[RMDB]
RNA sequence: GGGAACGACUCGAGUAGAGUCGAAAAUCCCCAUAGUUCGCUAUGGGGAAAAGCCGUACCGCGUAGCACGCGGUUAGGAGCGAAGAUAUCCACGGCACGCGAAAACCUUCGCCUUCGGGCGAAGGAAGCAUUAUUCUGGGUUCGCCCAGAAUAAUGCAAAAGAAACAACAACAACAAC
Reactivity to DMS in 0.01 (KOAc 150mM, MgCl2 10mM, bicine 150mM(pH8.5), 24C), signal-to-noise 2, nucleotides 027 to 126: u000c000c000c050c000a000u000a000g000u000u010c120g080c000u000a010u000g000g020g020g000a000a020a060a090g010c000c010g020u000a090c000c000g010c010g020u010a140g020c090a300c000g000c010g010g000u000u040a030g000g000a130g010c080g000a120a080g000a100u000a040u000c020c010a160c020g020g000c020a100c060g000c070g000a050a140a160a070c010c000u000u000c000g000c000c000u000u010c150g010g010g020c000g010a010a000g010g000a020a060
Reactivity to 2A3 in 0.01 (KOAc 150mM, MgCl2 10mM, bicine 150mM(pH8.5), 24C), signal-to-noise 2, nucleotides 027 to 126: u000c000c010c000c010a000u010a020g000u030u060c250g020c070u000a010u010g000g000g000g090a010a060a000a030g020c010c000g000u020a010c000c010g000c010g030u020a010g160c210a010c080g000c010g030g000u000u060a040g020g010a020g000c060g110a090a040g070a230u090a080u090c000c010a010c010g000g010c040a020c080g140c030g070a010a020a050a090c000c000u000u000c000g000c000c010u020u130c270g100g000g000c000g000a010a000g000g010a010a000